RNA sequence: GGGAACGACUCGAGUAGAGUCGAAAAUGACGCCUAUAACUGGAUGAAGCAUAUUAUACAAAAUGGUUUUGUAGGCAACCUUAAUAUGUAUAGUCAUGUCUUUAUCGUUACACGAUAAUCAAUUUAUAAAACAGCUCCCCCUUCGGGGGGAGCUGAAGUGACAACAUUAGUUCGCUAAUGUUGUCACAAAAGAAACAACAACAACAAC
Reactivity to 2A3 in 0.01 (KOAc 150mM, MgCl2 10mM, bicine 150mM(pH8.5), 24C), signal-to-noise 2, nucleotides 027 to 156: u090g020a000c060g020c000c000u000a000u040a120a060c050u130g140g010a000u000g010a010a000g010c020a000u030a010u020u010a020u040a070c060a060a040a080a220u120g010g020u000u000u000u050g020u020a000g000g000c020a000a000c000c000u050u090a040a030u070a030u060g000u010a000u030a040g020u000c080a000u050g090u000c040u020u040u010a010u000c010g020u020u190a100c130a010c090g040a070u100a060a040u070c020a030a170u100u240u230a250u220a060a070a010a030c000a000g020c000u020c010c020c020c000c050u000u020c030g010g000g000g000g010g000a000g000c000u010g000a000a000

The record gives the reactivity of an RNA of 207 nucleotides to 2A3.
For 2A3, 977 sequencing reads were counted.
The reactions ran in a buffer of 150 mM KOAc, 10 mM MgCl2 and 150 mM bicine (pH 8.5), at 24 C.